[RMDB]
RNA sequence: GGGAACGACUCGAGUAGAGUCGAAAAGGAGCGGUGAAAUGUGUUGAUAUCGGAAGGAACGCCGGUGGCGAAAGCGACACGCUGGGGCCUGUCUGACGCUGAGGCACGAAAGCCAGGGUAGCGAACGAGGGUAACUGGUGUUCGCACCAGUUACCCUAAAAGAAACAACAACAACAAC
Reactivity to 2A3 in 0.01 (KOAc 150mM, MgCl2 10mM, bicine 150mM(pH8.5), 24C), signal-to-noise 1, nucleotides 027 to 126: g060g000a030g000c040g010g000u140g030a090a150a140u160g010u060g020u010u050g000a080u000a020u170c040g010g020a050a060g030g030a060a040c000g070c050c000g100g040u020g000g030c020g060a050a000a000g110c090g050a070c050a070c130g030c000u000g000g050g000g000c130c000u030g110u000c010u000g000a000c000g030c010u030g030a060g020g000c020a050c010g090a000a020a020g060c030c010a040g000g010g010u070a030g020c020g070a010a010c010g040
Reactivity to DMS in 0.01 (KOAc 150mM, MgCl2 10mM, bicine 150mM(pH8.5), 24C), signal-to-noise 2, nucleotides 027 to 126: g030g010a020g000c030g010g020u040g000a040a070a070u000g000u050g000u020u020g000a070u000a030u000c050g000g070a050a120g010g000a040a130c140g050c070c050g000g060u020g000g000c060g040a090a190a140g050c000g040a040c110a030c210g010c020u020g000g020g000g050c000c120u000g000u020c050u000g010a090c070g020c050u000g010a090g010g030c060a060c130g030a030a020a070g000c020c060a050g000g040g000u000a110g000c070g000a050a050c300g000